[RMDB]
About this RNA:
An RNA of 177 nucleotides, treated with 2A3 and read out base by base.
RNA sequence: GGGAACGACUCGAGUAGAGUCGAAAAAAAAGUCUGCUCUCUUCUAACGCGGUUAUAAUAUAGAACCGUAUUAAUGGUUGCAGCUUUUUCCUCUUCAUGGAAUCGGUAUAGAUUAUGUCGGGGAGACUCGAGGAUAGGACUUCGGUCCUAUCCUCGAAAAAGAAACAACAACAACAAC
Reactivity to 2A3 in 0.01 (KOAc 150mM, MgCl2 10mM, bicine 150mM(pH8.5), 24C), signal-to-noise 1, nucleotides 027 to 126: a000a000a000a000g040u040c000u000g020c000u000c000u010c000u260u020c040u040a020a000c040g020c000g040g010u050u010a130u060a190a160u260a070u010a220g230a090a000c000c000g020u000a020u020u040a000a060u070g020g020u080u050g000c010a000g000c020u000u060u000u000u000c000c000u010c010u010u020c000a020u090g000g150a120a080u030c020g000g100u220a290u160a170g010a020u040u000a000u090g070u060c010g000g000g090g000a000g020a030c010

It was measured as part of the RMDB library RFM100.